[RMDB]
RNA sequence: GGGAACGACUCGAGUAGAGUCGAAAACAGCGCGCACGGCGAACCUAGCAUUGGAGCUGGAUGCGGCCACUGAGGUCGGCCGGGCGUGUGCUGGCUGUCGUGUUGAACCUGGUGUAGUUCAUUAUCAAGCACAACCUGUAUUCGUACAGGUUGUGCUAAAAGAAACAACAACAACAAC
Reactivity to 2A3 in 0.01 (KOAc 150mM, MgCl2 10mM, bicine 150mM(pH8.5), 24C), signal-to-noise 1, nucleotides 027 to 126: c020a000g030c000g000c020g040c000a010c060g030g000c010g000a020a040c000c040u030a030g060c010a110u030u150g150g080a060g040c040u010g130g020a080u300g040c070g030g000c030c000a020c080u160g050a020g050g000u010c000g070g150c000c040g010g010g010c040g020u050g080u040g020c070u020g010g010c000u100g000u150c010g000u000g020u100u060g000a010a020c040c000u060g040g180u140g030u060a100g020u010u010c040a050u090u190a120u160c090a000
Reactivity to DMS in 0.01 (KOAc 150mM, MgCl2 10mM, bicine 150mM(pH8.5), 24C), signal-to-noise 2, nucleotides 027 to 126: c030a040g030c020g010c010g000c030a040c000g010g000c010g010a060a040c040c000u000a130g030c050a130u000u000g010g010a300g010c010u010g010g030a070u010g010c030g010g030c000c010a070c110u000g030a040g010g040u000c030g000g000c000c010g010g000g000c010g020u010g000u010g020c030u000g000g020c040u000g010u000c070g010u010g000u020u020g010a020a090c040c050u000g000g010u000g040u020a090g010u010u000c060a040u010u000a080u010c160a090

Source information: The record gives the reactivity of an RNA of 177 nucleotides to 2A3 and DMS. The RNA was probed in 150 mM KOAc, 10 mM MgCl2 and 150 mM bicine (pH 8.5) at 24 C. For DMS the reverse transcriptase was MarathonRT.